[RMDB]
RNA sequence: GGGAACGACUCGAGUAGAGUCGAAAAAACAGACUCAGCAUUCCCUUAACUUUGUGGGAGAGUUCGUUGUCAACGAUGUUGUCCUCGCAAUUCUCUCUGGAACCACAACUAAUGUUGACAAAAUACGGUACUAAGAUGUUCGCAUCUUAGAAAAGAAACAACAACAACAAC
Reactivity to DMS in 0.01 (KOAc 150mM, MgCl2 10mM, bicine 150mM(pH8.5), 24C), signal-to-noise 7, nucleotides 027 to 129: a070a050c120a030g050a060c060u030c030a120g040c010a060u030u020c000c010c060u010u010a050a090c140u030u020u020g000u000g050g000g020a070g000a060g030u020u050c060g000u000u010g010u000c020a000a000c000g020a130u010g000u000u000g000u030c010c050u000c080g010c160a070a090u000u000c070u000c060u000c010u000g020g030a010a210c030c070a090c030a040a050c130u000a090a100u070g040u020u010g000a090c110a030a020a030a030u010a080c090g020g040u000a110
Reactivity to 2A3 in 0.01 (KOAc 150mM, MgCl2 10mM, bicine 150mM(pH8.5), 24C), signal-to-noise 9, nucleotides 027 to 129: a000a000c110a040g060a040c010u010c040a010g020c010a040u020u020c010c000c000u020u020a090a080c050u040u070u120g090u090g020g010g010a050g000a020g020u040u030c030g020u040u040g050u040c010a010a000c040g190a130u270g000u030u020g020u040c000c000u020c030g020c070a040a080u110u000c000u000c000u000c010u030g070g020a030a030c040c020a030c040a040a050c040u130a110a130u190g000u010u010g020a030c040a010a050a010a000u160a040c040g030g000u000a020

The record gives the reactivity of an RNA of 170 nucleotides to DMS and 2A3. Conditions: 150 mM KOAc, 10 mM MgCl2 and 150 mM bicine (pH 8.5), 24 C. For DMS the reverse transcriptase was MarathonRT. High 2A3 reactivity points to a flexible backbone, as in loops and unpaired stretches. For 2A3, 29,689 sequencing reads were counted.